Chemical mapping of a 177-nucleotide RNA with 2A3 and DMS. The 2A3 profile rests on 94,772 reads. Conditions: 150 mM KOAc, 10 mM MgCl2 and 150 mM bicine (pH 8.5), 24 C.
RNA sequence: GGGAACGACUCGAGUAGAGUCGAAAAACUAGUAUGUACAGGGGUGAGUUGACCUGUCAUCUAGACUGCUGACCAUCAACUCACCGGUUAGCUGGAUGAUGUCCACAGAGUACGACAUCAGUACUCAGUGUAAGCUUGCGUUCGCGUAAGUUUACACAAAAGAAACAACAACAACAAC
Reactivity to 2A3 in 0.01 (KOAc 150mM, MgCl2 10mM, bicine 150mM(pH8.5), 24C), signal-to-noise 9, nucleotides 027 to 126: a000c020u020a020g060u090a080u190g120u080a030c030a040g150g030g010g040u050g030a050g020u030u030g040a050c020c060u030g020u000c000a010u000c000u030a070g130a250c090u080g020c010u010g010a010c010c020a030u040c010a020a030c020u010c030a020c010c000g000g020u030u020a010g000c010u010g020g020a060u070g020a030u070g080u030c020c010a070c050a080g030a010g020u040a010c050g080a030c080a140u110c020a040g010u010a010c010u010c050a020
Reactivity to DMS in 0.01 (KOAc 150mM, MgCl2 10mM, bicine 150mM(pH8.5), 24C), signal-to-noise 9, nucleotides 027 to 126: a120c010u000a030g010u020a040u010g020u030a040c050a070g010g000g010g020u010g000a030g020u010u000g000a040c110c130u010g000u000c010a010u010c030u010a090g010a150c150u010g000c070u010g000a030c030c300a300u010c020a010a020c020u000c020a030c050c030g000g000u000u000a050g010c020u010g010g010a080u010g000a060u020g010u000c010c050a090c190a100g000a040g000u000a020c040g000a140c170a090u040c120a080g010u000a020c000u000c010a150